The record gives the reactivity of an RNA of 177 nucleotides to DMS and 2A3. For DMS, 18,020 sequencing reads were counted. For 2A3, 20,644 sequencing reads were counted.

RNA sequence: GGGAACGACUCGAGUAGAGUCGAAAACUACAUAGUUUCGACUAUGUAGAAACCAUUAGGAAGCAUGCAGAUGCAUAUGGUCGAGGGCAACUAACCUAUUGCGAACAGCAGGUUUCGACCUGCUGAAAUCCAGCUUAUAAUUCGUUAUAAGCUGGAUAAAAGAAACAACAACAACAAC
Reactivity to DMS in 0.01 (KOAc 150mM, MgCl2 10mM, bicine 150mM(pH8.5), 24C), signal-to-noise 9, nucleotides 027 to 126: c000u000a000c000a010u000a000g000u000u000u010c170g010a030c000u000a000u000g000u000a000g010a090a090a150c030c010a100u000u010a100g010g010a120a100g000c040a030u000g010c120a070g000a060u010g010c020a080u000a060u000g000g010u000c050g000a080g000g000g000c060a040a050c080u010a070a110c040c020u000a120u000u000g010c080g000a090a220c010a000g000c000a010g000g000u000u000u020c190g010a020c000c000u000g000c000u000g000a020a080
Reactivity to 2A3 in 0.01 (KOAc 150mM, MgCl2 10mM, bicine 150mM(pH8.5), 24C), signal-to-noise 9, nucleotides 027 to 126: c000u010a000c000a000u010a000g010u010u060u090c150g070a010c010u000a000u000g000u000a000g010a020a020a000c010c000a030u060u120a070g110g070a110a040g030c040a020u080g000c040a020g040a250u080g020c030a040u040a060u160g060g000u050c070g080a060g020g040g020c020a050a040c030u060a020a040c010c010u050a120u070u190g060c070g060a080a040c010a000g000c000a000g000g030u010u050u080c150g060a020c000c000u000g000c000u000g010a010a000